[RMDB]
Notes:
Chemical mapping of a 177-nucleotide RNA with DMS. Values cover nucleotides 27 to 126. DMS adducts were read by reverse transcription with MarathonRT. Values are in units of 0.01, from 0 to 300, in steps of 10. It was measured as part of the RMDB library TTRDES.

RNA sequence: GGGAACGACUCGAGUAGAGUCGAAAAAAAAAGAUAUGGACCGUGAACUACGGUUUAAAUGAGCAACAGCUAGCGUCGGAAACGACGCUAGACAUGCUCGGUAAACCGCACGGUCCUAAGUCAAAAAUCAUUAGGCUAUCUUCGGAUAGCCUAAUGAAAAAGAAACAACAACAACAAC
Reactivity to DMS in 0.01 (KOAc 150mM, MgCl2 10mM, bicine 150mM(pH8.5), 24C), signal-to-noise 2, nucleotides 027 to 126: a050a030a150a110a080g010a040u000a300u020g020g020a010c000c000g020u000g020a130a060c150u030a300c050g000g000u000u010u000a010a030a030u010g020a000g040c000a050a060c300a180g020c000u010a010g000c000g040u000c010g010g000a080a050a210c000g000a010c000g020c000u010a000g000a010c070a110u010g000c000u000c010g010g010u000a020a000a000c000c000g000c000a010c000g000g000u000c000c000u000a000a060g010u010c020a000a060a080a090a080